The record gives the reactivity of an RNA of 207 nucleotides to 2A3.
For 2A3, 1,368 sequencing reads were counted.
High 2A3 reactivity points to a flexible backbone, as in loops and unpaired stretches.
The RNA was probed in 150 mM KOAc, 10 mM MgCl2 and 150 mM bicine (pH 8.5) at 24 C.
RNA sequence: GGGAACGACUCGAGUAGAGUCGAAAAGCUGGGACUAGGUCAGAGCUACUCCCAGAGCAUGGGGGUACACCAUGUGGCCUGAGGGCAGUGAGCCAGGGAGGAGGGAGCAGGACAGCUGGGGGUGCUGGGAAGGAACUGAUGCUCCCAUAGUGUCUGACCAUGUUGUAUGGUUCGCCAUACAACAUGGAAAAGAAACAACAACAACAAC
Reactivity to 2A3 in 0.01 (KOAc 150mM, MgCl2 10mM, bicine 150mM(pH8.5), 24C), signal-to-noise 2, nucleotides 027 to 156: g040c020u010g030g050g060a050c050u080a020g020g030u100c100a030g010a030g130c100u030a000c000u010c030c020c000a010g010a030g080c130a080u050g000g010g000g000g000u030a020c020a050c040c060a120u180g090u090g080g030c000c020u040g070a110g020g020g060c010a040g050u040g170a030g040c040c020a020g030g020g050a140g050g000a060g020g030g020a030g050c030a030g000g080a060c020a020g040c030u080g000g000g000g010g000u110g010c050u030g000g000g010a030a050g040g030a040a020c090u110g020a070u090g030c010u020c000c000c000a000u020a020g160u080g020u000c020u030g000a030